[RMDB]
RNA sequence: GGGAACGACUCGAGUAGAGUCGAAAAGAUAUGGAUACUCCUCGGUUCUAUAAUCCUCAUUCGGAAACGAAUGAGGGUAGAACCGUGAGGAGGUAUCCUAAGUCAAACUGACAGUUCGCUGUCAGAACUCUAAGUUAGGCUUCGGCCUAACUUAGAGAAAAGAAACAACAACAACAAC
Reactivity to 2A3 in 0.01 (KOAc 150mM, MgCl2 10mM, bicine 150mM(pH8.5), 24C), signal-to-noise 2, nucleotides 027 to 126: g050a030u090a030u180g010g010a000u000a030c000u000c000c000u000c000g000g000u000u000c000u000a180u060a300a300u170c030c000u000c010a000u010u010c020g070g000a070a120a100c000g000a010a000u010g000a010g000g000g000u000a000g000a010a000c010c000g040u030g020a000g060g050a030g070g020u010a010u020c000c010u010a120a020g070u020c100a060a090a170c020u000g000a000c020a020g010u080u110c190g140c210u020g020u020c000a000g040a040a020
Reactivity to DMS in 0.01 (KOAc 150mM, MgCl2 10mM, bicine 150mM(pH8.5), 24C), signal-to-noise 2, nucleotides 027 to 126: g000a070u010a300u010g000g000a010u000a050c000u000c010c000u000c000g000g000u000u000c000u000a040u000a300a170u010c010c000u000c000a000u000u010c020g000g020a170a100a220c000g000a000a000u000g010a000g050g010g000u000a000g000a010a010c000c010g020u000g030a000g010g010a010g020g020u010a000u000c010c000u010a050a080g000u030c020a100a120a300c010u000g020a000c010a020g010u000u010c300g030c010u020g010u000c010a010g000a090a120
Source information: This 177-nucleotide RNA was probed chemically with 2A3 and DMS. High DMS reactivity at an A or C suggests that its Watson-Crick edge is free. For DMS the reverse transcriptase was MarathonRT. The 2A3 profile rests on 2,886 reads.